This 170-nucleotide RNA was probed chemically with 2A3 and DMS. 2A3 adducts were read by reverse transcription with SuperScript II with manganese. Values are in units of 0.01, from 0 to 300, in steps of 10. Source: RMDB library 15KLIB, as collected in RNAgym. Conditions: 150 mM KOAc, 10 mM MgCl2 and 150 mM bicine (pH 8.5), 24 C. The DMS profile rests on 32,651 reads. Values cover nucleotides 27 to 129. The 2A3 profile rests on 48,925 reads.
[RMDB]
RNA sequence: GGGAACGACUCGAGUAGAGUCGAAAAGACCGUCCCCUCGGUAAUGGCGAAUGGGACCCAGAAAUCUCUCUAGAUUCCGAUAGAGAAUCGAGAGAAAACUGGCUCUCCCUUAGCCAUCCGAGUGGACCAACAAAUGGCUUCGGCCAUUUGAAAAGAAACAACAACAACAAC
Reactivity to 2A3 in 0.01 (KOAc 150mM, MgCl2 10mM, bicine 150mM(pH8.5), 24C), signal-to-noise 6, nucleotides 027 to 129: g070a010c010c010g010u010c000c000c000c000u000c010g010g010u080a100a040u010g010g010c020g050a040a030u040g010g010g000a040c070c000c000a000g020a030a300a020u000c010u000c000u010c020u080a090g000a020u010u000c010c020g170a210u160a190g210a030g000a060a000u010c000g000a000g000a000g000a010a010a010a000c000u000g000g000c000u010c000u000c000c000c000u000u010a000g000c000c000a000u000c000c000g000a000g000u000g000g000a000c010c010a030a070
Reactivity to DMS in 0.01 (KOAc 150mM, MgCl2 10mM, bicine 150mM(pH8.5), 24C), signal-to-noise 4, nucleotides 027 to 129: g040a180c060c060g000u020c010c020c050c000u000c010g020g030u020a130a000u000g010g040c030g000a140a050u020g000g020g030a040c230c000c000a020g000a060a220a180u000c030u020c010u030c010u040a060g010a030u030u020c000c000g040a230u090a210g020a150g000a050a000u000c000g030a040g010a020g000a010a010a070a120c020u010g000g040c000u000c080u020c000c020c060u000u000a240g000c040c010a040u000c000c020g000a040g010u000g000g000a000c000c040a040a060